Conditions: 150 mM KOAc, 10 mM MgCl2 and 150 mM bicine (pH 8.5), 24 C.
The record gives the reactivity of an RNA of 177 nucleotides to 2A3 and DMS.
For DMS, 47,144 sequencing reads were counted.
The 2A3 profile rests on 25,849 reads.
[RMDB]
RNA sequence: GGGAACGACUCGAGUAGAGUCGAAAACUAUGUACAGACAGUACAGUGGAUAAGGUCUGUGGAUAUCCAACUACAACAAUGGUACUUGCAGUGGUAUCUAUCAAGAUAGGCAGGCUAUCAUAGAAAGGGGAUGUGUAUUAUUCGUAGUACGCAUCCCAAAAGAAACAACAACAACAAC
Reactivity to 2A3 in 0.01 (KOAc 150mM, MgCl2 10mM, bicine 150mM(pH8.5), 24C), signal-to-noise 9, nucleotides 027 to 126: c020u030a040u100g160u010a020c010a060g100a030c020a030g080u070a020c010a070g070u110g130g060a150u060a190a060g050g010u000c010u020g020u030g000g050a010u020a020u050c020c020a050a040c050u100a020c010a090a000c020a070a130u090g050g000u030a050c010u020u020g020c030a060g040u070g130g040u040a000u000c010u020a130u140c070a070a030g010a060u030a020g050g020c020a000g030g000c020u010a010u070c030a030u030a050g140a070a090a020g030
Reactivity to DMS in 0.01 (KOAc 150mM, MgCl2 10mM, bicine 150mM(pH8.5), 24C), signal-to-noise 9, nucleotides 027 to 126: c160u010a020u000g000u000a010c010a050g000a060c110a070g010u000a020c050a220g020u040g010g010a110u020a040a070g020g010u010c010u000g000u010g000g000a020u000a010u010c020c040a080a090c140u020a080c170a070a070c180a090a050u000g000g020u000a030c060u010u000g000c030a110g010u040g010g020u010a000u000c000u000a100u060c220a090a020g000a040u000a030g000g020c020a020g000g010c180u000a010u000c010a020u010a080g010a060a080a070g000